[RMDB]
RNA sequence: GGGAACGACUCGAGUAGAGUCGAAAAGAUAUGGAGUAUAACGAAUUAUACGAAGAACGCUCUCGGAAACGAGAGCGGGAGUGAUAACUAUUAUACUCCUAAGUCAAAAGCAUACUUCGGUAUGCAACAAAUGUAGACGGUUCGCCGUCUACAUUUGAAAAGAAACAACAACAACAAC
Reactivity to 2A3 in 0.01 (KOAc 150mM, MgCl2 10mM, bicine 150mM(pH8.5), 24C), signal-to-noise 2, nucleotides 027 to 126: g030a020u040a020u040g020g000a010g010u020a000u010a010a010c060g060a180a150u260u100a140u140a230c120g120a130a090g030a070a000c000g020c000u000c000u000c000g010g000a030a050a020c000g000a000g020a000g000c010g000g000g000a020g020u220g080a130u040a240a000c010u020a020u080u000a000u000a000c000u000c000c000u000a040a010g010u000c020a020a050a170a030g000c000a000u010a010c000u020u020c090g080g000u020a000u000g030c000a020a020
Reactivity to DMS in 0.01 (KOAc 150mM, MgCl2 10mM, bicine 150mM(pH8.5), 24C), signal-to-noise 3, nucleotides 027 to 126: g010a020u000a300u010g000g010a030g000u000a000u010a000a010c110g000a080a090u000u000a060u000a060c040g010a130a090g010a180a230c020g000c000u000c000u010c000g000g010a060a050a140c000g010a000g000a010g030c010g000g000g000a050g010u000g000a050u000a010a030c100u000a200u010u000a000u000a000c000u010c000c000u000a040a090g000u010c030a080a070a110a130g010c010a000u000a010c000u000u020c180g000g010u000a000u000g000c000a090a100